The record gives the reactivity of an RNA of 177 nucleotides to DMS and 2A3. For DMS the reverse transcriptase was MarathonRT. It was measured as part of the RMDB library OK2TST. The RNA was probed in 150 mM KOAc, 10 mM MgCl2 and 150 mM bicine (pH 8.5) at 24 C. For DMS, 1,729 sequencing reads were counted.
[RMDB]
RNA sequence: GGGAACGACUCGAGUAGAGUCGAAAAUUGCGCCCAACGCCAUUGUGCGUGUGACUAAUCUCAACCAGUUCGUGUCCAACGAGCUGCUGCACCAGUCCUUUGAGAUCUUUGGACCCAUCGAGCGCGAUGAUCAUACGCCUUUCGAGGCGUAUGAUCAAAAAGAAACAACAACAACAAC
Reactivity to DMS in 0.01 (KOAc 150mM, MgCl2 10mM, bicine 150mM(pH8.5), 24C), signal-to-noise 2, nucleotides 027 to 126: u010u000g000c070g030c000c030c030a090a080c030g020c030c040a160u010u000g050u000g010c020g000u010g020u000g030a080c060u010a070a130u000c040u010c030a060a100c230c020a010g000u010u000c000g000u000g000u000c110c200a110a080c000g000a010g010c010u000g000c120u000g010c130a030c090c190a050g000u000c050c040u000u000u000g000a080g000a060u000c070u010u000u010g020g000a050c020c020c030a150u010c060g030a080g000c050g000c040g040a050
Reactivity to 2A3 in 0.01 (KOAc 150mM, MgCl2 10mM, bicine 150mM(pH8.5), 24C), signal-to-noise 1, nucleotides 027 to 126: u010u040g030c000g000c010c010c000a030a000c010g000c000c020a230u160u250g070u090g040c020g020u050g070u020g050a010c020u120a080a120u030c020u000c030a040a030c010c000a030g000u010u050c010g000u020g090u130c120c080a060a010c010g050a030g000c000u020g000c010u050g030c010a010c020c020a030g070u040c000c000u020u100u070g070a130g000a020u040c000u030u080u070g050g040a030c010c010c000a070u030c060g000a010g110c020g000c030g000a050